Notes: Chemical mapping of a 207-nucleotide RNA with 2A3.
[RMDB]
RNA sequence: GGGAACGACUCGAGUAGAGUCGAAAACUUCUCUUCCCCCGCGGUUCCUCCUCGAUUCGGACCGGCUCAUCUCGACAAGAGGCGGCAGUCCUCAGUACUCUUACUCUUUUCUGAUAAAGAGGAGACUGCUGGACCCGCCGCCCAAGUUCGAGCAUGACCAAGACCAUUAGUUCGCUAAUGGUCUUGGAAAAGAAACAACAACAACAAC
Reactivity to 2A3 in 0.01 (KOAc 150mM, MgCl2 10mM, bicine 150mM(pH8.5), 24C), signal-to-noise 2, nucleotides 027 to 156: c030u120u050c020u040c050u020u020c000c000c000c030c020g010c010g020g020u130u190c000c000u120c020c040u100c150g090a080u140u100c020g040g000a010c040c000g000g020c020u020c000a010u000c000u000c000g000a010c010a080a030g110a100g100g000c000g000g000c000a020g000u000c000c020u000c010a040g000u120a300c010u000c030u040u130a130c010u050c000u070u130u100u120c130u150g120a210u150a250a010a000g020a010g000g000a000g010a000c000u020g110c070u000g000g000a000c000c040c120g000c000c010g030c000c000c000a000a020g030u060u000c000g000a000g000c000a000u020g020a000
Reactivities are given for positions 27 through 156.
The 2A3 profile rests on 833 reads.
Conditions: 150 mM KOAc, 10 mM MgCl2 and 150 mM bicine (pH 8.5), 24 C.